[RMDB]
The record gives the reactivity of an RNA of 177 nucleotides to 2A3 and DMS. 2A3 is a SHAPE reagent: it acylates the 2'-hydroxyl of flexible nucleotides of all four kinds. Source: RMDB library OK2TRN, as collected in RNAgym. The reactions ran in a buffer of 150 mM KOAc, 10 mM MgCl2 and 150 mM bicine (pH 8.5), at 24 C. For DMS the reverse transcriptase was MarathonRT. The 2A3 profile rests on 10,155 reads. Reactivities are given for positions 27 through 126. 2A3 adducts were read by reverse transcription with SuperScript II with manganese.
RNA sequence: GGGAACGACUCGAGUAGAGUCGAAAAUACUGUGCAUUUCUGGCUACUGAGCACCAGCGAGUCGGCACCUGCAGAGACGGGAGGGAGGAGGUGCCACGUGCAGCAUCCUGGUGAGGCUCUGCUCCCAUAGUCUCUAAAAGUUCGCUUUUAGAGACUAAAAAGAAACAACAACAACAAC
Reactivity to 2A3 in 0.01 (KOAc 150mM, MgCl2 10mM, bicine 150mM(pH8.5), 24C), signal-to-noise 4, nucleotides 027 to 126: u110a020c060u040g020u030g100c040a080u040u100u070c040u060g070g000c030u110a060c050u140g040a020g030c030a020c030c010a010g030c020g080a010g060u090c040g030g010c020a020c010c010u050g000c040a020g050a010g020a170c070g020g020g030a090g040g060g000a100g010g040a020g020g020u010g000c010c010a030c030g050u100g000c020a030g020c010a060u070c000c010u050g020g040u090g050a060g030g000c000u000c020u040g050c020u020c010c000c000a000
Reactivity to DMS in 0.01 (KOAc 150mM, MgCl2 10mM, bicine 150mM(pH8.5), 24C), signal-to-noise 6, nucleotides 027 to 126: u010a100c080u010g010u000g000c040a100u000u010u000c040u010g010g000c040u010a160c080u000g000a110g010c040a070c050c040a050g010c100g010a050g020u000c080g010g000c060a050c010c010u000g020c050a100g000a130g000a110c100g010g000g010a120g000g000g000a120g000g010a050g010g010u000g010c020c020a020c120g020u010g010c050a050g000c070a100u000c020c010u010g020g000u000g010a140g010g010c020u000c010u000g010c030u000c000c010c020a170